[RMDB]
RNA sequence: GGGAACGACUCGAGUAGAGUCGAAAAAAAGUUAGCGUACUAGAGUCGCGGUGAGUACGCUAUGGUUCCGUGAGACUCUACUCGAGCGUAUCACGGAACCCACGUACAUACCGUACGUGCUAUAAAAACUCACUUAAGCAUUCGUGCUUAAGUGAGUAAAAGAAACAACAACAACAAC
Reactivity to 2A3 in 0.01 (KOAc 150mM, MgCl2 10mM, bicine 150mM(pH8.5), 24C), signal-to-noise 4, nucleotides 027 to 126: a000a000a010g090u010u010a000g010c010g010u000a000c010u030a030g100a100g150u110c070g020c030g080g080u120g030a000g000u000a000c000g000c000u010a020u040g040g000u040u030c020c000g000u020g010a040g000a000c000u000c010u010a000c000u010c000g010a000g000c010g000u010a070u030c030a000c000g010g040a020a030c020c010c000a000c010g000u010a000c000a070u150a190c030c130g000u000a000c000g010u000g020c020u080a140u150a120a100a020a020
Reactivity to DMS in 0.01 (KOAc 150mM, MgCl2 10mM, bicine 150mM(pH8.5), 24C), signal-to-noise 3, nucleotides 027 to 126: a030a030a050g020u000u000a000g010c000g010u000a010c000u000a100g010a130g010u010c050g010c030g000g000u010g000a060g000u010a010c010g000c010u000a000u000g000g000u000u000c020c020g020u010g000a240g000a010c000u010c000u000a020c010u000c040g000a000g030c050g000u000a090u000c050a050c020g010g000a030a050c030c100c000a020c010g020u010a000c010a130u020a130c240c180g010u000a010c010g020u010g020c080u000a070u000a050a050a060a080